[RMDB]
RNA sequence: GGGAACGACUCGAGUAGAGUCGAAAAGGUGAUGUCAACUUAAACCAGCCAUCAUAUGUCUGGUUAGACCAGAAAGACAUUUAGGCCCUGACUGGUCCACUUGUUCCAUCGGAGCUUCAGGUGCUGGCUUGACGGCACGAUUCGUCGUGCCGUCAAGAAAAGAAACAACAACAACAAC
Reactivity to DMS in 0.01 (KOAc 150mM, MgCl2 10mM, bicine 150mM(pH8.5), 24C), signal-to-noise 2, nucleotides 027 to 126: g000g000u010g000a090u010g010u000c050a130a230c190u010u020a030a040a050c010c000a000g010c000c000a060u020c300a110u010a300u000g000u000c000u000g000g000u010u000a080g000a180c080c030a110g000a080a090a160g000a040c050a040u010u010u010a200g020g010c000c040c020u000g000a090c200u000g000g000u020c030c050a110c170u000u050g000u000u030c050c020a050u020c110g000g010a140g000c020u000u000c040a050g000g020u000g040c000u000g000g000
Reactivity to 2A3 in 0.01 (KOAc 150mM, MgCl2 10mM, bicine 150mM(pH8.5), 24C), signal-to-noise 1, nucleotides 027 to 126: g080g050u050g030a000u030g000u060c000a030a050c100u080u150a090a010a010c000c000a030g030c000c000a030u080c050a080u120a030u280g010u000c020u000g020g020u010u020a030g050a060c020c010a000g050a050a040a000g020a010c000a030u000u090u300a120g040g000c000c000c000u000g030a050c090u010g000g120u020c020c040a060c120u180u270g080u190u000c040c010a050u070c110g070g000a050g030c030u040u000c010a010g030g030u140g090c010u000g000g010